RNA sequence: GGGAACGACUCGAGUAGAGUCGAAAAUUCACGCGUGGUUCCAAUUAUGGCGGCUAGAUGACGAAGGCUUGAUCAGCUACUGCUGUAAAAUAAUGAAACUAAAAGCGCCGUAUUGUUGAUAAUCUACGAAUUAUAUCUCCUUCGGGAGAUAUAAUUCAAAAGAAACAACAACAACAAC
Reactivity to DMS in 0.01 (KOAc 150mM, MgCl2 10mM, bicine 150mM(pH8.5), 24C), signal-to-noise 1, nucleotides 027 to 126: u010u000c080a100c020g000c020g030u010g000g000u010u000c040c020a080a180u000u000a010u010g010g050c000g020g010c300u000a050g010a080u000g010a050c030g040a090a120g040g010c100u000u010g010a180u000c020a040g000c030u000a080c050u000g000c020u010g000u000a040a060a100a100u020a110a100u020g010a080a050a060c040u030a000a060a100a300g010c070g020c040c080g020u000a120u020u000g010u040u000g000a070u000a060a190u000c020u020a040c300